[RMDB]
RNA sequence: GGGAACGACUCGAGUAGAGUCGAAAAAAGUUGCACCAGGUACGCAUACCAGACGUUGCCAAACAGGGUGACAUGAGGAUCACCCAUGUACUGUCCCUUGGCAGCCGUACCUGGUGCUGGUGAAAAAACAUUUGGGAAUGUUCGCAUUCCCAAAUGUAAAAGAAACAACAACAACAAC
Reactivity to 2A3 in 0.01 (KOAc 150mM, MgCl2 10mM, bicine 150mM(pH8.5), 24C), signal-to-noise 1, nucleotides 027 to 126: a000a020g300u180u070g000c000a010c000c000a020g000g000u010a000c010g060c030a080u090a280c030c000a030g140a100c050g010u030u020g000c000c040a030a040a010c060a030g020g000g010u010g000a010c040a070u260g120a190g070g040a120u060c020a040c000c000c000a010u000g010u010a060c060u090g090u070c010c000c020u000u020g000g010c000a000g040c020c010g010u010a000c000c010u000g000g000u000g000c000u010g000g000u120g100a060a010a000a000a000
Reactivity to DMS in 0.01 (KOAc 150mM, MgCl2 10mM, bicine 150mM(pH8.5), 24C), signal-to-noise 3, nucleotides 027 to 126: a030a070g000u010u010g010c000a020c010c000a010g000g010u000a020c020g020c240a140u000a180c140c090a100g000a090c140g030u000u000g000c010c000a010a050a060c060a050g010g010g030u000g000a010c030a090u000g010a110g000g000a170u000c080a050c000c000c050a030u000g020u010a070c170u010g000u010c010c010c020u010u000g000g000c000a030g000c030c030g020u000a000c010c000u000g000g000u000g010c000u010g010g010u000g000a000a040a070a070a040

Conditions: 150 mM KOAc, 10 mM MgCl2 and 150 mM bicine (pH 8.5), 24 C. The record gives the reactivity of an RNA of 177 nucleotides to 2A3 and DMS. For 2A3, 1,482 sequencing reads were counted.